[RMDB]
RNA sequence: GGGAACGACUCGAGUAGAGUCGAAAAGUCGAGAGUGGGUCUCCUCUCGCAAAUCAAAGAUCCAAACAAAAUGUAACUGCGAACAACAUCGUUCCUUUCGCUCGCAAAGCUGCUGCUGUAGCUUAAUAAGAACACCUUAACUUAGGUUCGAGCAUUCGUUAUCGUCUAGCUUCGGCUAGACGAUAACAAAAGAAACAACAACAACAAC
Reactivity to 2A3 in 0.01 (KOAc 150mM, MgCl2 10mM, bicine 150mM(pH8.5), 24C), signal-to-noise 3, nucleotides 027 to 156: g200u140c020g000a000g000a000g000u020g000g000g000u010c010u020c030c020u010c010u000c010g100c170a020a020a000u060c030a010a000a010g040a040u050c010c000a060a130a060c030a030a080a040a050u220g020u140a030a100c060u080g040c070g070a060a030c050a030a020c030a130u050c020g050u000u020c020c000u100u240u070c080g000c000u010c000g000c010a030a010a020g000c000u020g010c020u070g010c130u210g000u020a000g010c000u070u040a060a050u030a090a020g050a030a000c030a020c070c010u050u080a080a170c050u090u140a030g000g030u030u030c000g020a010g000c010a040u140u110c080
Description:
The record gives the reactivity of an RNA of 207 nucleotides to 2A3. 2A3 adducts were read by reverse transcription with SuperScript II with manganese. Values cover nucleotides 27 to 156. The reactions ran in a buffer of 150 mM KOAc, 10 mM MgCl2 and 150 mM bicine (pH 8.5), at 24 C.